[RMDB]
Background
Source: RMDB library OK3TST, as collected in RNAgym. This 207-nucleotide RNA was probed chemically with 2A3.

RNA sequence: GGGAACGACUCGAGUAGAGUCGAAAACGCGCAGUGAUAGUCGCGGCGUCCACCUCCGUCUCCUCAGUGUGGAACGGGAUACCGCAAGCGGGGCCACGGUCUGCCCCCCACUUGUUGCCGGGGCGGUCCACGAUGGCGUGCCACCUGGGCGGGCGCGCCCUGAAAGCCCAUUCGUGGGCUUUCAGGGAAAAGAAACAACAACAACAAC
Reactivity to 2A3 in 0.01 (KOAc 150mM, MgCl2 10mM, bicine 150mM(pH8.5), 24C), signal-to-noise 2, nucleotides 027 to 156: c030g050c000g010c000a060g030u050g230a210u230a190g160u290c030g000c030g020g000c000g020u000c010c040a140c010c000u070c020c010g000u100c050u070c070c010u070c050a100g020u090g020u050g260g010a050a040c060g000g110g040a120u140a200c030c040g050c110a100a000g060c060g060g000g020g010c000c000a030c050g010g020u020c000u000g000c010c000c010c020c000c000a000c040u230u200g150u230u110g120c110c070g050g000g010g000c000g000g000u020c000c000a040c080g100a130u050g020g000c070g010u100g040c010c000a010c000c000u030g030g000g010c020g020g000g010c000g020c010g010
The RNA was probed in 150 mM KOAc, 10 mM MgCl2 and 150 mM bicine (pH 8.5) at 24 C.